Annotation: Chemical mapping of a 207-nucleotide RNA with 2A3. 2A3 adducts were read by reverse transcription with SuperScript II with manganese. Source: RMDB library OK3TST, as collected in RNAgym.
[RMDB]
RNA sequence: GGGAACGACUCGAGUAGAGUCGAAAACUUAUCAGUUGGGUGUGACUAAUGGCAUUUGGGUAGUUUUCACUGAAGUGACACUAAAAUUUUCCAUGCCACAUUCUGUAGGCAAGGCCCUCACGUUUAUCAAGGAGAAAGUCUUGACUUGGGAGAGCGGCUGUGUUUUUGGUUUCGACCAAAAACACAGAAAAGAAACAACAACAACAAC
Reactivity to 2A3 in 0.01 (KOAc 150mM, MgCl2 10mM, bicine 150mM(pH8.5), 24C), signal-to-noise 1, nucleotides 027 to 156: c050u110u130a040u210c110a100g020u110u090g070g010g000u030g000u010g030a030c010u080a240a000u030g000g120c110a080u050u080u280g010g040g000u060a040g040u180u000u000u000c050a010c040u070g180a160a030g090u080g030a020c030a030c070u120a000a160a100a240u100u190u020u010c030c010a030u060g000c010c000a040c000a030u200u230c060u070g100u100a060g020g000c000a010a010g020g000c070c070c030u010c010a110c030g040u040u050u180a130u140c110a050a050g080g000a020g130a050a030a020g020u030c030u040u040g030a030c000u030u050g020g030g000a010g000a020g030c020g020g000